[RMDB]
RNA sequence: GGGAACGACUCGAGUAGAGUCGAAAAACUAAGGAUGUAUUAGCUAAUACCAAUUUUUUUGUUUUCAUACAUAUGGUACGAUGUUGUAAAGUGUACGAAGCGGUUUUACGACACGCAUUUGAUGCACCCACGUUGUACGUUAAAGCAUUGACUAAGAUAUAUACCCUGGGUUCGCCCAGGGUAUAUAAAAAGAAACAACAACAACAAC
Reactivity to DMS in 0.01 (KOAc 150mM, MgCl2 10mM, bicine 150mM(pH8.5), 24C), signal-to-noise 1, nucleotides 027 to 156: a060c040u010a070a080g030g010a130u010g030u000a140u010u000a170g040c070u000a100a080u000a150c040c010a070a000u020u000u060u000u000u020u000g020u000u010u000u000c020a150u000a110c030a130u010a080u000g010g000u010a040c010g040a110u000g010u000u010g030u000a070a040a110g030u000g010u000a120c020g010a160a060g020c000g000g030u000u000u010u000a050c170g010a200c070a040c000g010c020a060u020u000u000g020a100u000g000c060a060c210c010c020a020c240g000u000u010g010u010a010c070g030u010u000a050a110a110g010c030a040u010u000g020a160c020u010a050a090g020a300